[RMDB]
RNA sequence: GGGAACGACUCGAGUAGAGUCGAAAAGGUGACUGCAGUAGCAGUUGCAGCACAAGGCGCAGCAGCAGCAGCUAAGGACAAAGUCGCCACUGCAGCUGCAAGUGCGGCAGCAGCAGCAAAGUCGAAAACUAGUGGUCGAGUUCGCUCGACCACUAGUAAAAGAAACAACAACAACAAC
Reactivity to 2A3 in 0.01 (KOAc 150mM, MgCl2 10mM, bicine 150mM(pH8.5), 24C), signal-to-noise 1, nucleotides 027 to 126: g040g000u050g000a070c010u040g000c000a030g040u070a010g030c000a010g000u010u040g020c000a010g020c000a020c020a050a080g180g030c060g030c050a010g020c000a000g010c040a000g000c000a000g000c050u160a000a130g100g000a000c040a020a160a020g030u120c010g060c070c000a000c000u000g000c010a030g000c000u000g020c000a000a040g130u090g010c050g060g000c000a000g000c000a000g050c000a000g030c020a060a060a000g060u030c010g120a120a020a000
Reactivity to DMS in 0.01 (KOAc 150mM, MgCl2 10mM, bicine 150mM(pH8.5), 24C), signal-to-noise 1, nucleotides 027 to 126: g010g050u000g020a030c000u000g040c010a270g010u000a050g000c000a060g030u000u020g000c000a050g010c050a040c150a130a050g000g000c060g100c050a100g000c020a090g020c010a090g030c010a070g010c060u040a080a110g000g000a110c120a060a050a140g010u010c080g000c020c000a180c030u000g000c000a050g050c010u050g000c040a020a110g000u000g010c020g000g020c110a030g000c090a090g000c040a160g000c070a080a180a110g020u070c000g030a100a060a040
The data come from the RNA Mapping Database (RMDB), library OK1LIB. Structure probing data (2A3 and DMS) for a 177-nucleotide construct. Conditions: 150 mM KOAc, 10 mM MgCl2 and 150 mM bicine (pH 8.5), 24 C.